[RMDB]
RNA sequence: GGGAACGACUCGAGUAGAGUCGAAAAAGGAUAGGAUUCGUCCUAUCCUACACCAAAACCUCCUGGCGGUGCGGCCCCGGCCCCGCCGGGAAGGCCGCCUUAUUGGUAGCUGGUUCGCCAGCUACAAUCAUGGACGAAUAUUCGUAUUCGUCCAUGAAAAAGAAACAACAACAACAAC
Reactivity to DMS in 0.01 (KOAc 150mM, MgCl2 10mM, bicine 150mM(pH8.5), 24C), signal-to-noise 2, nucleotides 027 to 126: a040g010g000a030u000a000g000g010a020u000u020c180g010u000c000c000u010a000u000c000c000u000a020c100a230c040c040a090a070a100a200c030c020u000c050c010u000g010g020c000g000g010u000g010c030g030g020c080c010c020c010g000g000c010c060c080c080g010c010c000g010g030g000a040a040g040g010c070c080g000c080c060u000u020a070u000u020g010g030u000a010g010c000u000g010g000u000u020c150g020c000c000a010g000c000u000a000c000a040a120
Reactivity to 2A3 in 0.01 (KOAc 150mM, MgCl2 10mM, bicine 150mM(pH8.5), 24C), signal-to-noise 2, nucleotides 027 to 126: a000g010g010a000u010a000g000g010a030u050u090c170g030u000c050c000u000a000u010c010c000u010a010c010a020c000c030a000a020a040a200c000c040u040c000c020u010g000g000c000g030g000u150g190c010g020g050c030c030c000c010g030g020c040c100c030c050g000c000c000g000g000g010a010a000g020g020c040c030g170c000c020u090u200a130u040u140g120g000u000a000g000c000u000g000g080u050u040c220g010c050c000a000g000c020u020a000c000a000a010

The record gives the reactivity of an RNA of 177 nucleotides to DMS and 2A3.
For 2A3, 2,130 sequencing reads were counted.
The RNA was probed in 150 mM KOAc, 10 mM MgCl2 and 150 mM bicine (pH 8.5) at 24 C.
The data come from the RNA Mapping Database (RMDB), library M2PK50.
DMS adducts were read by reverse transcription with MarathonRT.